[RMDB]
RNA sequence: GGGAACGACUCGAGUAGAGUCGAAAAGCUGAGCUCAGGAGCUCAAGCCUACAGUGAGCUAUGAUUGCACCACUGCACUCCAGUCAGGUUGACAGAGUGAGACCCUGUCUCAGAGAAAAAGAAAAGAAUUAAUUUAGUGAUUCGUCACUAAAUUAAUAAAAGAAACAACAACAACAAC
Reactivity to DMS in 0.01 (KOAc 150mM, MgCl2 10mM, bicine 150mM(pH8.5), 24C), signal-to-noise 9, nucleotides 027 to 126: g010c010u000g010a010g010c130u010c030a060g000g010a090g020c020u000c010a070a080g000c100c070u020a160c030a040g010u000g000a110g010c020u000a100u020g010a130u030u020g000c040a080c090c010a030c020u010g010c090a100c030u000c030c050a110g010u010c020a090g020g020u060u020g010a050c040a190g000a050g010u010g000a070g000a090c030c010c000u010g010u010c000u000c010a020g000a140g010a040a040a060a090a120g000a090a070a080a080g010a100
Reactivity to 2A3 in 0.01 (KOAc 150mM, MgCl2 10mM, bicine 150mM(pH8.5), 24C), signal-to-noise 9, nucleotides 027 to 126: g020c000u000g000a000g000c040u030c080a050g060g080a030g020c020u000c040a020a030g050c010c020u060a050c010a030g030u040g070a030g020c020u070a100u300g130a200u180u260g030c030a050c110c000a020c040u020g000c030a010c040u000c030c010a030g020u030c020a030g050g300u210u210g050a030c020a020g030a020g030u060g020a040g030a060c010c010c000u010g010u010c000u000c020a020g040a010g060a060a140a020a020a000g220a030a100a010a010g130a020